[RMDB]
Chemical mapping of a 207-nucleotide RNA with DMS and 2A3.
The 2A3 profile rests on 2,908 reads.
The RNA was probed in 150 mM KOAc, 10 mM MgCl2 and 150 mM bicine (pH 8.5) at 24 C.
For 2A3 the reverse transcriptase was SuperScript II with manganese.
It was measured as part of the RMDB library RNAMAK.

RNA sequence: GGGAACGACUCGAGUAGAGUCGAAAAGCCGAAUUCGUUCGGCGAAAGUCCUAAGUCGUAUGACGAUCGGGAGUACGAUAAGUUUCGGAAACGAAACUUUUGACGUACGACGAUCGAUCGUACAUACGAUAUGGAGCUUGGGCUUCUUCGGAAGCAAGAAACGGUGGAUAUUCGUAUCCACCGUUUCAAAAGAAACAACAACAACAAC
Reactivity to DMS in 0.01 (KOAc 150mM, MgCl2 10mM, bicine 150mM(pH8.5), 24C), signal-to-noise 2, nucleotides 027 to 156: g010c000c000g010a020a070u000u000c250g040u010u000c040g000g010c000g010a030a060a030g040u000c020c010u000a050a290g010u000c020g040u010a020u000g010a050c030g030a030u000c000g010g000g010a170g010u000a000c010g040a170u010a010a020g000u010u000u000c010g020g020a190a230a290c010g000a030a000a020c000u000u000u000u000g000a270c160g020u000a020c020g000a090c170g030a040u000c040g020a000u000c000g000u000a150c000a020u000a010c000g000a030u000a170u000g000g000a050g000c100u000u010g010g020g020c020u010u000c000u000u030c250g040g000a110a060g020c030a140a190
Reactivity to 2A3 in 0.01 (KOAc 150mM, MgCl2 10mM, bicine 150mM(pH8.5), 24C), signal-to-noise 2, nucleotides 027 to 156: g000c000c000g030a020a020u110u090c230g080u110u000c000g000g000c020g010a090a020a010g110u000c010c010u030a130a020g050u000c000g000u000a000u000g000a000c000g000a000u000c010g000g020g010a030g000u000a000c020g010a080u010a070a010g000u000u000u010c020g000g090a090a090a070c010g000a000a010a000c000u030u010u030u020g150a050c020g000u000a000c010g120a140c010g000a000u020c000g000a000u000c000g000u030a210c000a000u010a000c010g000a000u000a040u080g010g020a050g110c050u080u090g090g090g000c000u020u000c000u020u050c200g120g030a010a000g010c030a020a020